[RMDB]
RNA sequence: GGGAACGACUCGAGUAGAGUCGAAAACCUAGCAGGAUCCCUACCACUGCUAGUAGCACUAGUUUAUAUCCAAAAUACCACAGGCUCACUAAACUUCUUAAUUAUCCAUUACUGAUCCCACCCAUUAUCCAACUCUUGAUCAAACAUUUUUAUAUGACCCUUAUAGUCGCUUCGGCGACUAUAAGGGAAAAGAAACAACAACAACAAC
Reactivity to 2A3 in 0.01 (KOAc 150mM, MgCl2 10mM, bicine 150mM(pH8.5), 24C), signal-to-noise 1, nucleotides 027 to 156: c000c000u000a030g000c000a010g020g090a070u060c010c000c000u030a060c000c080a020c090u030g000c030u020a000g030u030a020g020c020a030c130u020a030g000u070u110u120a120u030a010u190c000c000a170a000a020a020u090a090c030c030a030c030a030g000g030c000u030c040a030c010u020a030a050a190c000u080u050c000u030u100a120a150u030u110a040u060c050c050a030u030u200a050c030u060g040a080u030c010c000c040a070c000c010c000a000u060u090a030u030c010c000a000a090c060u000c020u160u150g040a060u080c070a060a150a150c030a050u040u150u050u110u060a170u000a060u170g130a080